Source: RMDB library OK2TST, as collected in RNAgym.
Structure probing data (2A3 and DMS) for a 177-nucleotide construct.
DMS adducts were read by reverse transcription with MarathonRT.
For 2A3 the reverse transcriptase was SuperScript II with manganese.
[RMDB]
RNA sequence: GGGAACGACUCGAGUAGAGUCGAAAAGCGGAAGCCACGGAUCUUCACCUGGUGGUCGAUGCGGCCGACAUAUUCCACCUGGCCGUUGUCGCACAGGCGCACCAGGUCGCCGGUGCGGUACAGGCGACUCCUAUCCGCGAUUCGUCGCGGAUAGGAGAAAAGAAACAACAACAACAAC
Reactivity to 2A3 in 0.01 (KOAc 150mM, MgCl2 10mM, bicine 150mM(pH8.5), 24C), signal-to-noise 1, nucleotides 027 to 126: g080c020g100g030a060a000g020c020c000a050c060g020g010a060u050c080u140u120c100a020c040c010u000g100g010u040g010g030u150c040g050a040u100g020c010g010g000c040c000g040a050c000a030u280a140u170u040c050c030a080c090c060u070g080g000c050c030g020u020u150g050u020c000g000c010a000c000a030g040g010c040g000c020a000c020c020a040g070g010u000c010g020c000c030g000g030u040g000c000g000g000u040a080c050a030g050g000c010g060a020
Reactivity to DMS in 0.01 (KOAc 150mM, MgCl2 10mM, bicine 150mM(pH8.5), 24C), signal-to-noise 1, nucleotides 027 to 126: g000c100g000g000a150a110g030c030c060a020c090g000g000a030u010c060u000u020c110a050c020c000u020g010g000u000g040g040u000c000g000a080u000g000c050g000g010c040c030g030a100c110a060u010a080u050u000c020c040a090c110c080u000g020g020c060c020g030u000u010g010u000c000g000c030a050c090a000g000g000c010g020c010a050c020c040a070g010g000u000c030g010c010c010g020g050u000g020c000g000g000u000a060c160a170g010g000c040g000a090